[RMDB]
The record gives the reactivity of an RNA of 177 nucleotides to DMS and 2A3.
DMS adducts were read by reverse transcription with MarathonRT.
The data come from the RNA Mapping Database (RMDB), library TTRDES.
Values cover nucleotides 27 to 126.
Conditions: 150 mM KOAc, 10 mM MgCl2 and 150 mM bicine (pH 8.5), 24 C.
RNA sequence: GGGAACGACUCGAGUAGAGUCGAAAAGAUAUGGAUUAUCCUACUGAUCGAAGAACAACGUCGGAAACGACGUUGGGAGAUCGGUAGGAGUAAUCCUAAGUCAAAGCUCAGGAGUUCGCUCCUGAGCCAUUAAGAUGUAGUUCGCUACAUCUUAAUGAAAAGAAACAACAACAACAAC
Reactivity to DMS in 0.01 (KOAc 150mM, MgCl2 10mM, bicine 150mM(pH8.5), 24C), signal-to-noise 9, nucleotides 027 to 126: g000a060u010a300u010g010g010a020u000u000a030u000c000c000u000a010c000u000g010a010u000c000g000a140a190g010a130a190c000a000a010c000g020u000c000g010g000a120a130a280c010g020a000c000g010u000u000g000g000g000a090g000a000u000c000g010g010u000a000g000g000a010g010u010a000a000u000c000c000u010a050a140g000u000c050a110a120a180g000c000u000c000a010g000g000a020g010u000u010c300g020c000u000c000c000u000g000a010g010c010
Reactivity to 2A3 in 0.01 (KOAc 150mM, MgCl2 10mM, bicine 150mM(pH8.5), 24C), signal-to-noise 9, nucleotides 027 to 126: g040a020u110a070u200g000g000a000u000u010a020u040c000c000u010a000c010u010g000a010u010c020g210a300a040g010a070a040c000a000a010c010g000u000c010g000g050a090a060a080c010g000a000c000g000u000u000g010g000g010a060g000a000u000c000g010g000u000a010g000g000a000g000u010a000a000u000c000c000u010a120a010g020u010c090a190a120a040g000c000u000c010a000g010g010a010g010u150u250c300g090c190u000c010c000u000g000a000g000c000